[RMDB]
RNA sequence: GGGAACGACUCGAGUAGAGUCGAAAAGAAGAGCAGGCAGAUAAUCUUGUGCAGUAUGCAUGCUCUUACCUCCACACGAAGUAAGGCAGCAAAAGAAUAACUGCCACUGCACAAGUGGAGCCGCAGAGAGCGGAGUAGUAUUCGUACUACUCCGCUCAAAAGAAACAACAACAACAAC
Reactivity to 2A3 in 0.01 (KOAc 150mM, MgCl2 10mM, bicine 150mM(pH8.5), 24C), signal-to-noise 5, nucleotides 027 to 126: g100a010a010g030a000g020c030a030g030g040c020a020g020a200u160a150a080u160c000u020u030g010u000g000c000a030g000u080a080u180g010c010a050u020g000c010u010c000u020u000a010c000c000u000c020c040a140c030a020c120g080a100a020g040u050a020a040g070g000c040a030g000c040a030a030a090a070g170a090a130u140a140a050c010u030g000c000c010a000c000u000g000c000a000c010a010a010g000u010g010g020a000g020c030c030g050c060a040g100a010
Reactivity to DMS in 0.01 (KOAc 150mM, MgCl2 10mM, bicine 150mM(pH8.5), 24C), signal-to-noise 2, nucleotides 027 to 126: g050a040a010g010a040g000c000a060g000g040c020a160g020a160u020a110a070u020c000u000u000g000u000g040c000a010g050u010a050u020g000c010a040u000g010c000u000c000u000u000a020c000c060u000c000c070a060c210a110c220g010a060a060g000u030a100a040g000g040c000a000g020c090a070a070a140a150g000a100a090u040a060a120c030u030g000c030c030a180c000u000g000c010a030c040a020a030g020u010g000g000a050g030c040c020g000c050a080g000a160

Conditions: 150 mM KOAc, 10 mM MgCl2 and 150 mM bicine (pH 8.5), 24 C. Chemical mapping of a 177-nucleotide RNA with 2A3 and DMS. 2A3 adducts were read by reverse transcription with SuperScript II with manganese. For DMS the reverse transcriptase was MarathonRT.